[RMDB]
The record gives the reactivity of an RNA of 177 nucleotides to 2A3 and DMS.
Reactivities are given for positions 27 through 126.
For DMS the reverse transcriptase was MarathonRT.
It was measured as part of the RMDB libraries RFM100 and RFMREP.
The RNA was probed in 150 mM KOAc, 10 mM MgCl2 and 150 mM bicine (pH 8.5) at 24 C.
High DMS reactivity at an A or C suggests that its Watson-Crick edge is free.
For 2A3 the reverse transcriptase was SuperScript II with manganese.
RNA sequence: GGGAACGACUCGAGUAGAGUCGAAAAGAAAAAUUGCCCAUAGAAUAUUCAGUACAAGCAUGUUAAUCAUCAAUGCGCUGAUAUGAGAGAGCAGGACUUUCAACGGCAGCGCAUACACGAUGCUGAACUUCGAAAGAACAUUCGUGUUCUUUCGAAGAAAAGAAACAACAACAACAAC
Reactivity to 2A3 in 0.01 (KOAc 150mM, MgCl2 10mM, bicine 150mM(pH8.5), 24C), signal-to-noise 6, nucleotides 027 to 126: g110a010a110a020a010a030u120u150g080c000c000c000a020u080a000g140a040a040u150a110u130u080c020a000g020u080a060c010a030a100g030c050a080u110g040u130u210a120a040u210c020a000u020c030a040a050u010g000c010g000c000u000g030a020u040a100u210g080a080g000a010g000a000g040c110a130g070g110a170c020u010u010u000c040a050a080c080g110g000c000a000g000c000g040c000a000u000a000c030a000c070g060a020u030g000c000u010g000a050a040
Reactivity to DMS in 0.01 (KOAc 150mM, MgCl2 10mM, bicine 150mM(pH8.5), 24C), signal-to-noise 5, nucleotides 027 to 126: g000a030a060a040a140a130u030u040g020c010c000c010a190u100a120g000a110a060u030a080u000u020c030a040g040u000a060c110a070a120g010c120a060u010g000u010u050a090a030u020c060a040u020c060a120a030u000g000c010g030c000u000g010a020u020a140u010g010a300g000a010g000a040g010c060a160g000g010a300c010u010u000u000c000a020a150c190g000g020c000a000g000c000g010c000a010u000a050c290a120c180g000a070u010g000c010u000g000a040a110